[RMDB]
RNA sequence: GGGAACGACUCGAGUAGAGUCGAAAAGUCAUGCCUUCGGGCAUGACAGGUACCGAGAGGUACCAAAUACAGUUUAGCACAUCCUGACUAGACUGUAAGAAAGUUUAUGUUCAACAUGGUCCAGUUGAACGUAGACUACGUUGGACCAAGGAUGUGACACUGCAUAUGAGUUCGCUCAUAUGCAGUGAAAAGAAACAACAACAACAAC
Reactivity to 2A3 in 0.01 (KOAc 150mM, MgCl2 10mM, bicine 150mM(pH8.5), 24C), signal-to-noise 4, nucleotides 027 to 156: g010u000c000a000u000g000c000c010u040u100c250g030g000g000c000a000u000g000a000c000a000g000g000u000a010c010c030g030a040g000a030g080g000u010a000c000c000a000a000a010u040a000c000a000g000u000u010u010a000g000c000a010c000a090u000c010c000u000g010a030c000u000a000g000a000c000u000g010u010a040a060g190a080a140a000g010u010u020u000a030u020g000u000u010c020a020a020c030a070u150g100g060u130c050c070a040g010u000u000g000a000a000c000g000u000a000g010a000c010u050a060c120g060u030u040g020g030a070c050c030a010a000g000g000a000u010g010u000g020a010
Reactivity to DMS in 0.01 (KOAc 150mM, MgCl2 10mM, bicine 150mM(pH8.5), 24C), signal-to-noise 2, nucleotides 027 to 156: g010u000c010a020u000g000c000c010u000u020c300g050g050g040c000a040u000g010a010c000a030g000g000u000a020c000c000g020a300g000a300g020g000u000a000c000c010a010a040a130u010a000c000a020g000u010u000u010a010g000c030a090c000a030u000c010c020u030g020a120c000u000a040g020a030c020u000g000u000a040a110g020a100a160a050g020u000u000u000a010u020g000u000u000c000a010a030c010a100u000g060g030u010c130c100a280g010u000u000g010a030a040c030g030u000a000g000a030c010u010a110c140g030u010u010g010g000a190c110c080a050a090g000g030a020u000g020u000g010a190

An RNA of 207 nucleotides, treated with 2A3 and DMS and read out base by base.
2A3 adducts were read by reverse transcription with SuperScript II with manganese.
Values cover nucleotides 27 to 156.
The reactions ran in a buffer of 150 mM KOAc, 10 mM MgCl2 and 150 mM bicine (pH 8.5), at 24 C.